[RMDB]
RNA sequence: GGGAACGACUCGAGUAGAGUCGAAAAGGCAAUGCAAAGAGCAGUCGCAGGGCUGCAUAUUACGCCCGAUUAUGUCUUGAUUGACGGUAACCGUUGCCCGAAACUGGCUAUGCCAUCAUUGGCUGUGAACUUGAGCAAGUUUCGACUUGCUCAAGUUAAAAGAAACAACAACAACAAC
Reactivity to 2A3 in 0.01 (KOAc 150mM, MgCl2 10mM, bicine 150mM(pH8.5), 24C), signal-to-noise 2, nucleotides 027 to 126: g030g000c020a070a030u120g000c030a090a070a060g090a040g040c020a020g030u030c010g040c170a050g020g120g020c020u030g000c050a020u040a040u060u080a030c050g040c000c020c000g000a020u100u130a080u160g090u000c010u090u180g150a210u110u100g020a040c050g000g040u090a060a020c010c020g040u040u050g050c000c050c000g030a050a040a040c050u050g020g000c010u040a070u160g000c030c000a040u060c020a050u040u210g030g000c030u020g050u050g090
Reactivity to DMS in 0.01 (KOAc 150mM, MgCl2 10mM, bicine 150mM(pH8.5), 24C), signal-to-noise 5, nucleotides 027 to 126: g010g020c030a050a050u000g010c110a080a100a080g020a140g010c000a010g010u000c020g040c300a100g020g000g000c010u000g020c040a040u000a050u010u000a100c150g010c030c040c020g010a110u020u010a050u010g010u000c040u010u010g000a130u000u000g000a070c050g020g020u000a040a100c090c030g000u000u010g010c030c000c050g010a050a080a070c110u000g010g010c050u000a080u000g000c010c010a040u000c190a130u000u010g020g010c020u000g020u000g020

About this RNA:
The record gives the reactivity of an RNA of 177 nucleotides to 2A3 and DMS. The reactions ran in a buffer of 150 mM KOAc, 10 mM MgCl2 and 150 mM bicine (pH 8.5), at 24 C. DMS adducts were read by reverse transcription with MarathonRT. It was measured as part of the RMDB library OK2TRN. The DMS profile rests on 4,460 reads.